[RMDB]
RNA sequence: GGGAACGACUCGAGUAGAGUCGAAAAUAGUUCUAGAAUGCUUUACAUUCCAAUUCUGGGUUGGAAUCAGUAUGUGAGGGAGAAUAGUGGAGGUUGAGAUUUGAAGAGUAAGAUGGCAGGACAUUUUUUCAUAUUGGAUCUUGUCAACCAUUUUAAGCCACUCUAAGCUGUUCGCAGCUUAGAGUGGAAAAGAAACAACAACAACAAC
Reactivity to 2A3 in 0.01 (KOAc 150mM, MgCl2 10mM, bicine 150mM(pH8.5), 24C), signal-to-noise 1, nucleotides 027 to 156: u070a010g020u000u170c060u060a020g110a130a100u030g070c000u050u180u050a010c060a000u000u000c000c000a000a050u060u120c080u220g130g000g000u080u030g060g000a030a040u000c120a100g130u140a080u240g070u100g050a000g000g060g010a100g030a060a080u180a130g020u070g060g000a020g010g000u000u010g040a030g000a100u000u120u150g080a060a010g030a010g040u040a100a020g010a040u050g010g000c080a050g040g040a000c000a020u010u020u000u000u000u300c090a020u230a110u180u150g000g000a010u050c020u020u010g000u000c030a000a000c020c000a020u000u050u050u050a010a050g000
Notes
The record gives the reactivity of an RNA of 207 nucleotides to 2A3. The RNA was probed in 150 mM KOAc, 10 mM MgCl2 and 150 mM bicine (pH 8.5) at 24 C. For 2A3, 492 sequencing reads were counted. Source: RMDB library OK3TST, as collected in RNAgym.